[RMDB]
RNA sequence: GGGAACGACUCGAGUAGAGUCGAAAAAAGGACAGCAGGGAGAAAUCUUCCCGGAAGGAGAAGAGUAAAGGGACGCUGGCGGGGAGGAUCAACAGCAGGAGUGACUCUUGUGGUGACGACUCGGAGACUAUGUCUCUCGGUUCGCCGAGAGACAUAGAAAAGAAACAACAACAACAAC
Reactivity to DMS in 0.01 (KOAc 150mM, MgCl2 10mM, bicine 150mM(pH8.5), 24C), signal-to-noise 1, nucleotides 027 to 126: a050a020g010g010a100c030a060g030c020a060g000g000g000a120g000a060a090a090u000c040u000u000c020c000c000g010g040a130a060g000g000a070g030a010a040g020a050g000u010a100a080a100g030g000g000a060c140g010c040u000g000g040c110g020g000g030g010a040g000g010a070u000c060a050a060c090a110g000c070a010g010g010a040g010u000g050a110c050u000c010u000u010g030u000g010g010u010g010a100c130g000a060c090u000c120g040g010a110g000a190

An RNA of 177 nucleotides, treated with DMS and read out base by base. The RNA was probed in 150 mM KOAc, 10 mM MgCl2 and 150 mM bicine (pH 8.5) at 24 C. For DMS, 929 sequencing reads were counted. Values cover nucleotides 27 to 126. It was measured as part of the RMDB library OK2TRN.